[RMDB]
RNA sequence: GGGAACGACUCGAGUAGAGUCGAAAAGAUAUGGAUGAUGACAGGGAGCUCCAUGUCGGAAACGACAUGAGAGCGAAGAACUGUAUCAUCCUAAGUCAAAAGAUAAUGGGCUUCGGCCCAUUAUCAAGUAACACUUCUACUUCGGUAGAAGUGUUACAAAAGAAACAACAACAACAAC
Reactivity to DMS in 0.01 (KOAc 150mM, MgCl2 10mM, bicine 150mM(pH8.5), 24C), signal-to-noise 3, nucleotides 027 to 126: g000a000u000a010u010g000g010a000u000g010a000u010g010a040c000a010g020g020g000a070g030c020u000c000c000a000u000g000u000c010g020g010a000a000a030c010g010a030c020a000u000g010a140g000a010g040c020g000a030a090g000a190a300c000u000g010u000a030u010c010a000u000c000c000u000a010a060g000u010c000a140a120a170a160g000a010u000a000a000u000g000g000g000c010u000u010c300g040g010c000c010c000a000u000u000a000u010c000a080a120
Reactivity to 2A3 in 0.01 (KOAc 150mM, MgCl2 10mM, bicine 150mM(pH8.5), 24C), signal-to-noise 2, nucleotides 027 to 126: g010a000u020a000u030g000g010a000u010g000a010u030g210a040c000a000g080g060g060a200g040c000u000c000c000a000u000g010u010c010g000g000a000a000a000c010g050a010c010a010u140g060a210g000a000g300c030g020a040a040g020a000a010c000u010g020u010a000u000c000a000u000c000c000u000a000a000g000u010c010a030a000a070a180g000a000u000a000a000u000g000g000g010c010u070u130c300g130g000c000c000c000a000u000u000a000u010c000a000a000